Description
This 170-nucleotide RNA was probed chemically with 2A3 and DMS. Reactivities are given for positions 27 through 129. Reactivities are rounded to 0.1 and cut off at 0 and 3. Source: RMDB library 15KLIB, as collected in RNAgym. The DMS profile rests on 19,136 reads. The reactions ran in a buffer of 150 mM KOAc, 10 mM MgCl2 and 150 mM bicine (pH 8.5), at 24 C.
RNA sequence: GGGAACGACUCGAGUAGAGUCGAAAACCUCGAGGGGGUUCACAUCCCCAACCCGCGGGCCGGCUACUCUUCUUUCCCUUCUCUCGUCUUCUUCGGUCAACCUCCGAAGUUCCUCUUCCUCUUCCCUCACCCGAUGCGUUCGCGCAUCGGAAAAGAAACAACAACAACAAC
Reactivity to 2A3 in 0.01 (KOAc 150mM, MgCl2 10mM, bicine 150mM(pH8.5), 24C), signal-to-noise 5, nucleotides 027 to 129: c000c000u040c030g060a180g000g010g020g020g020u080u090c060a030c000a130u080c020c010c000c010a010a010c010c010c010g030c050g010g020g020c010c010g010g020c000u050a070c020u030c010u110u030c020u040u050u030c000c000c000u040u000c040u000c000u010c010g080u020c080u110u000c000u030u030c030g020g000u070c050a110a100c040c010u020c010c010g030a030a010g020u000u020c010c010u000c000u020u040c000c000u010c000u020u020c010c000c030u000c020a060c010
Reactivity to DMS in 0.01 (KOAc 150mM, MgCl2 10mM, bicine 150mM(pH8.5), 24C), signal-to-noise 5, nucleotides 027 to 129: c010c050u090c120g050a170g000g000g000g000g000u040u030c170a140c210a160u020c010c010c000c010a080a140c040c030c040g030c090g000g000g000c010c010g020g010c050u020a130c070u030c030u080u000c020u030u020u040c000c020c040u020u010c060u010c020u010c060g040u000c090u030u040c020u030u030c080g000g040u010c080a120a220c110c060u040c030c010g000a080a100g030u010u010c010c030u010c000u000u030c040c010u030c030u020u030c000c020c010u030c060a120c110